RNA sequence: GGGAACGACUCGAGUAGAGUCGAAAAAGGUAAUUCGUUACCUGUGACCUCCUAAGUCAUACGGACAAUGACGGGAUGUUGUCAGUCGGAAACGACUUGGAUUUACAUCCUAAGACAGUCUCGUAUGAUAUGGAAUUGACACCAUUUCGAUGGUGAAAUAAACGCCUCGUUUCGACGAGGCGUUUAUAAAAGAAACAACAACAACAAC
Reactivity to DMS in 0.01 (KOAc 150mM, MgCl2 10mM, bicine 150mM(pH8.5), 24C), signal-to-noise 2, nucleotides 027 to 156: a050g020g010u000a010a050u000u000c190g000u000u000a010c000c010u000g000u010g000a050c010c020u040c000c000u010a120a270g030u000c010a010u000a010c010g030g000a060c010a160a140u010g000a190c240g010g030g010a030u000g000u000u000g000u000c000a060g010u010c000g020g030a230a200a300c020g000a040c000u000u000g000g010a020u000u010u000a060c040a040u000c000c000u000a110a150g030a180c080a080g000u010c000u010c010g060u000a030u000g000a040u020a130u000g010g000a150a100u010u000g000a230c010a030c000c000a060u000u000u030c260g000a040u000g010g000u020g000a040a190
Reactivity to 2A3 in 0.01 (KOAc 150mM, MgCl2 10mM, bicine 150mM(pH8.5), 24C), signal-to-noise 2, nucleotides 027 to 156: a020g080g000u090a020a010u160u300c300g010u110u000a000c000c000u010g050u080g110a090c000c000u000c000c000u100a190a060g020u010c000a000u000a000c000g000g000a000c010a080a300u200g030a050c010g000g010g000a000u000g000u000u020g020u000c000a000g000u000c000g000g030a100a040a050c030g010a000c000u000u110g070g000a020u040u000u080a020c010a000u000c000c000u050a100a010g100a090c030a010g060u000c030u030c240g000u010a000u000g010a000u000a080u000g010g010a000a000u110u190g050a110c000a000c000c000a000u070u120u180c270g070a020u030g000g000u000g020a000a000